[RMDB]
RNA sequence: GGGAACGACUCGAGUAGAGUCGAAAAGGUGAAAGCGAAUCGGGGAAGAUAAGCUAGCAGCAAAAAGGAACCGAUUCCCAACAAGUUCGGAAAGAGAUACCGGGCGAGGCGCUGAAGAAAGAAUCUCAAACUCCCGCAAGUUUCGACUUGCGGGAAAGAAGAAUGACUUGUUCGCAAGUCAUUCUUCAAAAGAAACAACAACAACAAC
Reactivity to 2A3 in 0.01 (KOAc 150mM, MgCl2 10mM, bicine 150mM(pH8.5), 24C), signal-to-noise 2, nucleotides 027 to 156: g040g000u060g060a140a050a000g020c020g030a020a010u020c000g010g000g000g010a010a070g020a160u100a110a020g030c020u100a040g050c050a010g010c050a160a040a000a050a060g130g000a030a020c010c010g010a010u030u040c010c000c010a020a010c020a060a000g010u020u010c000g020g040a100a110a010g030a030g000a000u030a050c000c040g020g000g010c010g000a020g000g030c030g000c030u050g020a060a010g050a050a090a010g040a040a040u020c020u020c040a040a070a100c070u000c030c020c000g000c000a000a000g000u010u150u190c100g060a030c020u000u000g000c000g000g000g000a000a000a000

Structure probing data (2A3) for a 207-nucleotide construct.
Values are in units of 0.01, from 0 to 300, in steps of 10.
Source: RMDB library M2RFPK, as collected in RNAgym.
The reactions ran in a buffer of 150 mM KOAc, 10 mM MgCl2 and 150 mM bicine (pH 8.5), at 24 C.